The record gives the reactivity of an RNA of 177 nucleotides to 2A3 and DMS. Conditions: 150 mM KOAc, 10 mM MgCl2 and 150 mM bicine (pH 8.5), 24 C.
[RMDB]
RNA sequence: GGGAACGACUCGAGUAGAGUCGAAAAAGGCGAACGUUUUGAUGCCCACGAUUUUGCCGACCAGGCGAAAGCUGGCGGCGCAGGCGCACUACUGGUUAGCCGUCCGCUGGACAUCGACCUGCCGCAGGGGAAUCCUACUAUUCGUAGUAGGAUUCCCAAAAGAAACAACAACAACAAC
Reactivity to 2A3 in 0.01 (KOAc 150mM, MgCl2 10mM, bicine 150mM(pH8.5), 24C), signal-to-noise 2, nucleotides 027 to 126: a000g090g000c060g000a090a110c060g020u040u100u210u210g050a050u070g010c010c000c020a040c030g060a020u070u100u070u250g000c000c010g070a190c060c050a040g070g000c040g030a070a040a020g030c000u030g000g000c020g010g020c030g040c030a020g030g050c050g010c100a060c070u230a070c060u180g090g060u090u120a010g000c000c000g010u000c040c020g000c050u080g000g020a010c000a040u040c020g070a070c020c000u080g000c020c000g010c030a030g020
Reactivity to DMS in 0.01 (KOAc 150mM, MgCl2 10mM, bicine 150mM(pH8.5), 24C), signal-to-noise 2, nucleotides 027 to 126: a070g010g000c000g000a080a180c120g010u020u000u000u020g020a020u000g010c000c000c010a100c140g010a200u010u000u020u010g010c000c010g000a130c120c110a130g000g000c010g010a050a040a090g030c010u000g000g010c020g010g020c030g040c100a050g000g000c070g000c190a050c110u010a110c090u000g010g000u000u010a170g020c120c040g000u000c030c060g030c090u000g010g000a020c020a060u000c000g000a030c070c030u010g010c100c000g020c150a130g000
Source: RMDB library OK2TRN, as collected in RNAgym.
For DMS the reverse transcriptase was MarathonRT.